[RMDB]
RNA sequence: GGGAACGACUCGAGUAGAGUCGAAAAGUUCUCGAGGGCCUUCCUUCUGCGGUGAUCCUCCCUCUCCUUGUCGGUGAACCCGCUCUUGUGAGGCCUCUUCCCAGGUCCGGAGUCGACCUCCAUCUGACAGACAAAACUACUUCGGUAGUUUUGUCUGAAAAGAAACAACAACAACAAC
Reactivity to DMS in 0.01 (KOAc 150mM, MgCl2 10mM, bicine 150mM(pH8.5), 24C), signal-to-noise 1, nucleotides 027 to 126: g000u000u000c000u000c020g010a090g010g020g020c020c020u000u000c150c020u000u000c040u010g010c050g020g040u030g000a130u000c030c010u000c040c040c010u020c020u000c090c090u000u000g000u000c190g020g030u000g000a060a130c270c010c000g020c020u000c050u010u010g000u020g000a020g000g000c000c000u000c010u000u000c000c000c030a120g010g000u000c040c060g030g000a030g010u000c050g020a110c060c000u010c050c000a080u000c040u000g010a300
The record gives the reactivity of an RNA of 177 nucleotides to DMS.